[RMDB]
RNA sequence: GGGAACGACUCGAGUAGAGUCGAAAAUCAGAGCUCACUAUGUGCAGUGCUCUCUCAUUGGUGUUUGCAUAGCAGAGAAAUAGUCAUGGUUUAGUAGAAAAAGUUCGAGCUUUGAAGCCAGACUUAGCACUACGCGCCUAUUCGUAGGCGCGUAGUGAAAAGAAACAACAACAACAAC
Reactivity to DMS in 0.01 (KOAc 150mM, MgCl2 10mM, bicine 150mM(pH8.5), 24C), signal-to-noise 1, nucleotides 027 to 126: u020c020a020g000a050g030c010u010c020a100c030u010a060u010g000u010g010c080a160g000u010g000c150u000c090u000c020u010c050a120u020u010g010g040u000g050u010u010u010g000c040a060u000a060g010c060a060g010a040g010a120a020a110u020a060g020u010c080a080u000g010g000u010u000u010a050g020u010a110g000a070a100a110a050a080g020u000u020c130g010a080g020c000u010u000u010g000a020a130g000c070c010a090g040a090c040u000u000a080g010
Record summary
This 177-nucleotide RNA was probed chemically with DMS. Values cover nucleotides 27 to 126.